[RMDB]
RNA sequence: GGGAACGACUCGAGUAGAGUCGAAAAGAAUCUCACUUGGGCGGGUGCUUUAGUGACUCCAGCGCGUAUUGGGGAUUUAUGUAGUGAGAUUAUGAAUACGUUGAAAUGAUUACGCGCAAAGUAAGAAGGGUAAUGUUAAGUUCGCUUAACAUUACCCAAAAGAAACAACAACAACAAC
Reactivity to 2A3 in 0.01 (KOAc 150mM, MgCl2 10mM, bicine 150mM(pH8.5), 24C), signal-to-noise 2, nucleotides 027 to 126: g070a010a020u000c000u000c000a000c020u030u070g000g030g070c000g090g120g000u160g070c100u010u090u090a090g040u110g120a010c050u070c000c080a020g020c000g010c000g000u030a000u010u180g030g000g000g000a000u030u090u110a160u140g070u030a000g010u000g050a020g000a000u030u030a050u090g090a050a130u100a090c130g000u010u050g100a120a140a010u120g010a010u010u010a040c000g010c000g000c050a000a020a000g070u060a070a040g050a050a030
Reactivity to DMS in 0.01 (KOAc 150mM, MgCl2 10mM, bicine 150mM(pH8.5), 24C), signal-to-noise 3, nucleotides 027 to 126: g020a110a040u000c020u000c000a010c000u010u010g010g000g050c130g000g020g010u020g000c070u030u010u050a080g010u020g000a080c060u020c060c070a090g020c000g000c000g000u000a020u000u020g000g000g000g000a160u020u000u030a040u040g000u000a060g010u000g000a010g000a030u000u000a090u020g040a110a060u030a040c120g000u010u030g000a050a070a100u010g010a140u000u000a020c040g010c030g000c000a120a030a070g020u020a060a130g010a200a240